Source: RMDB library M2PK50, as collected in RNAgym. Chemical mapping of a 177-nucleotide RNA with 2A3 and DMS.
[RMDB]
RNA sequence: GGGAACGACUCGAGUAGAGUCGAAAAAGACAUACGUUCGCGUAUGUCUGACGGGCACCUGACCCUUAGGAAAUGCUCUAUGACAGGACACACUGAUUGUGAUACCUCGAGAUUUCGAUCUCGAGAAAUCGAACAGUACAUUCGUGUACUGUUCGAUAAAAGAAACAACAACAACAAC
Reactivity to 2A3 in 0.01 (KOAc 150mM, MgCl2 10mM, bicine 150mM(pH8.5), 24C), signal-to-noise 5, nucleotides 027 to 126: a000g000a000c000a010u010a010c000g050u010u070c260g000c000g100u010a000u000g000u010c000u000g000a020c010g010g010g000c010a010c030c020u040g100a120c020c020c000u030u100a030g020g050a030a140a090u090g020c010u000c030u050a110u150g110a060c020a040g040g050a040c000a000c000a010c060u110g130a260u170u060g040u020g050a080u100a130c000c020u000c010g010a000g000a010u030u070u140c210g060a010u020c000u000c000g000a000g000a040a020
Reactivity to DMS in 0.01 (KOAc 150mM, MgCl2 10mM, bicine 150mM(pH8.5), 24C), signal-to-noise 7, nucleotides 027 to 126: a020g000a020c000a000u000a010c000g020u010u010c220g040c010g030u000a000u000g000u000c000u000g000a080c180g000g000g020c030a060c030c020u000g000a190c030c010c030u010u000a040g000g000a070a090a090u000g000c030u000c010u010a080u010g020a130c070a040g000g010a130c050a050c050a060c080u000g000a120u010u000g020u000g010a160u000a100c190c000u000c010g000a010g000a010u000u000u010c190g010a020u000c000u000c000g000a020g010a010a060
The 2A3 profile rests on 7,603 reads.